Conditions: 150 mM KOAc, 10 mM MgCl2 and 150 mM bicine (pH 8.5), 24 C.
An RNA of 177 nucleotides, treated with DMS and 2A3 and read out base by base.
For DMS, 3,338 sequencing reads were counted.

RNA sequence: GGGAACGACUCGAGUAGAGUCGAAAAUAGUAAGCUUCUAGAUACAUGUUUUGAAGCUACAGAAGCAACAUUUAACUUCUUGUUAGAUUUGGCAGGAUUGUUCAGAAUCUUUCUCCGCAAUGCCUAUCAAUGGAGUAAUGUUCGCAUUACUCCAUUGAAAAGAAACAACAACAACAAC
Reactivity to DMS in 0.01 (KOAc 150mM, MgCl2 10mM, bicine 150mM(pH8.5), 24C), signal-to-noise 4, nucleotides 027 to 126: u010a110g000u010a040a090g010c010u000u000c000u010a050g000a090u010a110c250a130u020g020u000u000u010u000g010a040a040g010c010u000a060c040a070g000a090a060g020c060a060a060c180a060u000u000u000a050a060c030u010u010c110u000u000g010u000u020a040g010a060u000u000u010g020g020c070a070g000g000a040u010u010g010u000u000c120a070g010a040a070u000c060u010u000u000c010u000c030c080g000c120a060a050u000g010c030c030u000a120u000
Reactivity to 2A3 in 0.01 (KOAc 150mM, MgCl2 10mM, bicine 150mM(pH8.5), 24C), signal-to-noise 4, nucleotides 027 to 126: u140a010g030u030a090a020g000c000u000u000c030u050a010g000a070u070a180c120a110u180g070u030u070u030u080g020a010a010g010c010u010a000c010a010g090a050a010g030c020a010a060c010a040u050u080u050a030a020c020u060u060c020u110u170g040u050u040a050g010a120u020u010u100g050g000c030a010g010g090a070u030u060g020u070u070c030a030g040a100a070u020c000u020u050u000c040u030c030c000g030c030a040a050u090g050c000c010u040a040u060